[RMDB]
RNA sequence: GGGAACGACUCGAGUAGAGUCGAAAAAUGUUUGCAUAGAACAAGAUGAGCUGCAUCAUCACUUGCCUUUAAUGUACAUUUUGUCCUGCUUUCAAUCCAAGGAUCUGGACAUGACAGAGAGUAGAGAUGCCUGCUGUUUUUAAAAAGAAUGGCAAGAACCAGUGAGAAGGUUCGCCUUCUCACUGGUAAAAGAAACAACAACAACAAC
Reactivity to 2A3 in 0.01 (KOAc 150mM, MgCl2 10mM, bicine 150mM(pH8.5), 24C), signal-to-noise 2, nucleotides 027 to 156: a000u140g010u100u060u110g040c070a090u070a090g010a130a050c050a020a080g040a140u020g020a020g030c090u120g030c100a050u030c000a020u050c020a020c040u010u020g030c040c020u120u070u060a170a070u070g030u070a050c020a070u010u040u030u060g040u000c000c020u040g060c080u040u030u080c050a080a090u010c070c000a050a160g080g010a130u050c100u030g040g010a040c020a050u070g050a010c060a040g050a010g000a000g010u020a020g040a010g020a060u020g000c010c030u030g000c010u000g070u010u040u010u020u060a050a130a020a010a000g060a030a030u030g000g010c000a030a020g060a010
Reactivity to DMS in 0.01 (KOAc 150mM, MgCl2 10mM, bicine 150mM(pH8.5), 24C), signal-to-noise 1, nucleotides 027 to 156: a020u000g030u000u000u000g030c080a130u000a150g050a100a040c020a040a050g020a060u020g020a080g030c050u020g090c110a180u000c050a070u020c030a040c060u000u000g000c020c030u000u000u000a130a050u000g110u000a030c040a030u000u000u000u000g020u000c000c010u030g000c070u010u000u040c050a120a100u000c050c040a020a260g000g010a080u000c060u000g000g000a140c020a090u000g000a030c070a120g000a080g000a110g030u020a110g020a170g000a170u000g010c020c100u000g020c000u000g040u000u000u000u000u000a000a000a070a100a120g000a070a050u010g000g000c000a030a050g000a080